[RMDB]
RNA sequence: GGGAACGACUCGAGUAGAGUCGAAAAGAGCUUCACUUAUCGAAUGAAGAGACCAAUGGGUUUCGCGUAGUCUGCGGGCUAUGCACCGUCUCUGAACCAACGGAGUCUUGUUUCGAGACAUCUGCCAGAUGGGGAGUUUGGCUGGGGCGGCAUAUCUACAGUACGUUAUGUUCGCAUAACGUACUGUAAAAGAAACAACAACAACAAC
Reactivity to 2A3 in 0.01 (KOAc 150mM, MgCl2 10mM, bicine 150mM(pH8.5), 24C), signal-to-noise 4, nucleotides 027 to 156: g080a010g040c000u030u020c030a030c060u130u240a130u280c100g060a140a100u080g020a050a030g030a030g030a050c030c060a050a180u150g050g000g020u020u130u120c080g000c000g010u010a010g010u000c010u050g060c170g060g010g030c000u000a000u020g000c020a020c010c010g020u000c010u000c010u030g060a110a080c010c010a030a010c030g080g010a030g030u020c000u040u100g090u120u140u220c070g010a010g000a010c020a200u020c020u050g060c030c020a110g040a240u130g010g020g020g040a070g030u030u090u060g000g010c010u010g010g000g000g000c000g010g030c020a030u040a040u070c060u000
Reactivity to DMS in 0.01 (KOAc 150mM, MgCl2 10mM, bicine 150mM(pH8.5), 24C), signal-to-noise 1, nucleotides 027 to 156: g010a170g000c000u000u010c020a040c050u000u000a140u030c160g030a100a060u000g010a050a050g000a060g000a040c040c060a170a110u000g010g000g030u010u000u000c030g000c010g030u000a060g010u000c030u020g040c300g090g000g010c010u000a030u000g000c030a060c030c010g000u000c010u000c020u020g010a130a040c040c010a030a100c040g040g000a130g000u000c010u000u000g020u000u000u010c090g000a110g020a050c030a110u000c030u000g000c020c110a160g010a080u010g010g000g000g010a130g040u000u000u010g000g020c090u000g000g000g000g000c050g030g000c020a030u000a060u000c010u000
The record gives the reactivity of an RNA of 207 nucleotides to 2A3 and DMS.
Values are in units of 0.01, from 0 to 300, in steps of 10.
It was measured as part of the RMDB library PDB130.
The 2A3 profile rests on 2,783 reads.
The RNA was probed in 150 mM KOAc, 10 mM MgCl2 and 150 mM bicine (pH 8.5) at 24 C.